[RMDB]
RNA sequence: GGGAACGACUCGAGUAGAGUCGAAAAGGGCCAAGUUGGAAGAGGAAACACGUGAACGCUAUGAAAGUUUUCAAAGGGGAACACUUAAAAGACUUCCAUACGGUUUCAUGACACUAAAGAAACCAUCCGACUAGGUUAUAUUCGUAUAACCUAGUCGAAAAGAAACAACAACAACAAC
Reactivity to DMS in 0.01 (KOAc 150mM, MgCl2 10mM, bicine 150mM(pH8.5), 24C), signal-to-noise 6, nucleotides 027 to 126: g010g010g000c040c020a080a080g010u000u000g010g010a050a040g010a120g000g010a100a090a080c110a100c070g020u000g000a020a070c040g000c150u010a100u010g000a040a060a060g010u000u020u020u010c090a060a070a030g000g000g020g030a080a140c140a080c020u020u010a050a080a060a030g000a030c020u010u000c040c010a030u010a010c090g010g010u010u010u000c010a040u010g010a150c170a040c140u020a040a070a110g000a030a040a040c030c010a100u020c140
Reactivity to 2A3 in 0.01 (KOAc 150mM, MgCl2 10mM, bicine 150mM(pH8.5), 24C), signal-to-noise 9, nucleotides 027 to 126: g050g010g040c020c020a040a040g070u050u040g060g030a060a030g050a040g060g100a090a090a010c080a010c070g020u020g050a090a000c030g020c110u010a040u090g070a070a030a040g050u040u030u050u070c100a130a100a040g020g020g020g070a080a030c060a020c070u060u070a060a070a000a040g040a030c000u020u000c010c000a020u040a080c050g030g000u010u020u030c030a040u080g080a030c030a020c150u180a120a120a040g040a030a040a020c010c010a010u060c050
An RNA of 177 nucleotides, treated with DMS and 2A3 and read out base by base. It was measured as part of the RMDB library OK1LIB. For DMS, 13,282 sequencing reads were counted. DMS (dimethyl sulfate) methylates the pairing face of unpaired adenines and cytosines. The reactions ran in a buffer of 150 mM KOAc, 10 mM MgCl2 and 150 mM bicine (pH 8.5), at 24 C.